[RMDB]
RNA sequence: GGGAACGACUCGAGUAGAGUCGAAAAGAUAUGGAUCCUUCGUUCCGACGAAGGUACACCACUCCCGACCUAUAUCGGAAACGAUAUAGGUCGGGGAGUGUACCAGAGGAAUUCGGGAUCCUAAGUCGAGUAAUUAGGACUUCGGUCCUAAUUACUCAAAAGAAACAACAACAACAAC
Reactivity to 2A3 in 0.01 (KOAc 150mM, MgCl2 10mM, bicine 150mM(pH8.5), 24C), signal-to-noise 1, nucleotides 027 to 126: g040a030u150a090u260g000g000a010u020c000c060u030u050c020g000u000u000c100c020g070a300c060g020a300a070g020g000u020a010c000a000c000c060a280c160u140c020c000c000g000a010c040c040u000a000u000a010u040c010g110g000a090a040a070c000g020a000u000a000u000a000g000g000u000c040g000g000g010g000a000g020u050g010u010a030c010c010a000g040a000g020g000a010a010u080u040c020g000g020g040a010u000c000c000u010a030a000g120u070c090
Reactivity to DMS in 0.01 (KOAc 150mM, MgCl2 10mM, bicine 150mM(pH8.5), 24C), signal-to-noise 1, nucleotides 027 to 126: g060a110u000a250u000g010g020a000u000c000c000u010u000c250g000u000u000c020c000g000a170c300g000a120a120g010g010u000a000c020a060c000c040a090c280u030c000c000c000g010a020c000c000u000a020u010a010u000c000g000g000a140a110a190c000g040a000u000a000u010a030g060g020u010c020g000g000g000g080a060g000u000g000u020a000c010c010a090g000a140g000g000a010a010u000u020c170g000g000g000a010u000c010c010u000a020a100g010u010c110